[RMDB]
RNA sequence: GGGAACGACUCGAGUAGAGUCGAAAAGGGGUCUAGCGUUGAGUGGUCUAGGAGAGGUGGGACUGAAGCCUCCACGGUCCCACUACCCACCUCCUGACCACAAUGAUGCGCUAGACGGAGGCACCCAAACAACGGUUACGUUCGCGUAACCGUUGAAACGUAUAAAUGGUUUCGACCAUUUAUACGUAAAAGAAACAACAACAACAAC
Reactivity to DMS in 0.01 (KOAc 150mM, MgCl2 10mM, bicine 150mM(pH8.5), 24C), signal-to-noise 2, nucleotides 027 to 156: g040g000g010g000u000c000u000a030g000c030g070u000u010g000a060g010u030g000g000u010c000u010a070g010g030a030g020a200g030g010u000g000g010g040a110c020u000g010a030a120g020c000c010u000c000c030a300c110g010g020u010c000c000c000a010c020u000a040c020c000c020a300c020c000u000c000c000u000g000a020c020c020a010c000a010a040u000g010a120u000g000c000g010c000u000a000g010a030c030g000g000a040g010g020c000a070c000c020c020a130a090a230c010a030a030c000g010g000u000u000a000c010g050u000u000c280g000c040g000u010a010a020c000c000g010u000u010g010a020a100
Reactivity to 2A3 in 0.01 (KOAc 150mM, MgCl2 10mM, bicine 150mM(pH8.5), 24C), signal-to-noise 4, nucleotides 027 to 156: g060g010g020g010u000c000u000a000g000c000g010u010u020g010a020g020u010g050g030u040c180u300a010g000g000a000g000a000g010g000u000g000g000g000a000c000u000g010a060a010g000c000c000u010c010c000a010c000g000g000u000c000c010c000a000c000u020a020c010c030c010a070c000c000u000c010c000u000g000a000c010c000a000c000a010a020u010g000a000u010g000c000g000c000u000a000g000a000c000g000g000a000g000g000c000a060c000c000c000a070a120a050c020a000a000c000g000g000u000u000a000c000g000u030u060c300g000c000g120u000a000a000c000c000g000u000u000g000a010a000